[RMDB]
RNA sequence: GGGAACGACUCGAGUAGAGUCGAAAAACCGUCGAGUACCAAGAGAAGGUACACGACGGAAUCACAACAUCUCAGUUGUGGAAAGAGAUUGGCAUCUCUAAAAUGCCUGAAAUCAAGGAAACUUGAAGCUGUCUUCAGACUUCGGUCUGAAGACAGCAAAAGAAACAACAACAACAAC
Reactivity to 2A3 in 0.01 (KOAc 150mM, MgCl2 10mM, bicine 150mM(pH8.5), 24C), signal-to-noise 2, nucleotides 027 to 126: a000c000c000g030u000c010g000a020g000u000a000c000c000a130a000g180a050g070a300a040g020g010u000a000c000a020c000g000a000c000g000g010a090a040u050c000a000c000a020a000c010a120u130c090u110c170a030g000u020u020g010u020g030g020a000a270a040g000a000g000a000u070u110g020g030c010a080u000c000u000c000u000a000a060a000a060u040g000c010c000u150g020a080a110a020u040c000a050a010g030g000a030a080a030c000u020u050g000a040a000

Annotation:
The record gives the reactivity of an RNA of 177 nucleotides to 2A3. 2A3 adducts were read by reverse transcription with SuperScript II with manganese. The RNA was probed in 150 mM KOAc, 10 mM MgCl2 and 150 mM bicine (pH 8.5) at 24 C.